[RMDB]
RNA sequence: GGGAACGACUCGAGUAGAGUCGAAAACGAAGAAGUGCGAGAUUAACCGCACCAGGGAGCAGAAUCUGACCCUCUAUUCCGGUGCCUGGUUCUACUUUUUCUCGAAGAUCAUCGAUCUGCUGGACACCGCCAGGACCCGUUUCGACGGGUCCUGGCGAAAAGAAACAACAACAACAAC
Reactivity to 2A3 in 0.01 (KOAc 150mM, MgCl2 10mM, bicine 150mM(pH8.5), 24C), signal-to-noise 1, nucleotides 027 to 126: c020g040a000a170g140a030a080g020u010g100c130g020a090g020a020u220u000a040a020c000c000g000c020a060c000c020a060g020g020g000a190g220c030a000g040a120a000u070c080u170g170a170c030c000c000u030c000u060a130u140u030c050c020g000g030u020g000c000c030u030g000g000u080u030c040u000a040c050u000u040u040u070u000c020u030c070g080a070a040g020a050u020c040a020u060c170g000a000u000c000u000g000c120u100g040g000a000c000a020c020